Record summary
Structure probing data (2A3) for a 207-nucleotide construct. 2A3 adducts were read by reverse transcription with SuperScript II with manganese. Conditions: 150 mM KOAc, 10 mM MgCl2 and 150 mM bicine (pH 8.5), 24 C.

[RMDB]
RNA sequence: GGGAACGACUCGAGUAGAGUCGAAAAGGGGUCACUGAUAUCUAAGACAGUGUGCAAACCAUCUGAAGCCUCCACGGAUGGGACGUAUACACAAUGACGGCCGAGUCAGUGACGGAGGCACCCAAAAGUGUAAAGGCAGUUCGCUGCCUUUACACAAGCAUAUCCGUCCGUUCGCGGACGGAUAUGCAAAAGAAACAACAACAACAAC
Reactivity to 2A3 in 0.01 (KOAc 150mM, MgCl2 10mM, bicine 150mM(pH8.5), 24C), signal-to-noise 2, nucleotides 027 to 156: g060g000g000g000u000c000a000c000u000g000a000u110a280u120c070u140a150a000g100a150c110a040g090u060g010u070g050c090a060a040a120c000c000a000u000c000u010g030a120a010g030c000c020u080c000c010a000c030g000g010a000u020g010g010g010a000c010g030u090a070u140a300c060a010c040a050a300u210g100a180c110g190g000c140c050g000a000g020u000c000a000g000u000g000a000c020g000g000a000g020g000c000a040c000c000c000a020a070a000a050g000u000g000u010a000a000a000g000g010c000a000g010u040u050c170g060c170u000g000c000c000u000u000u000a000c000a010c000a000a000

Notes
It was measured as part of the RMDB library RNAMAK. Values cover nucleotides 27 to 156.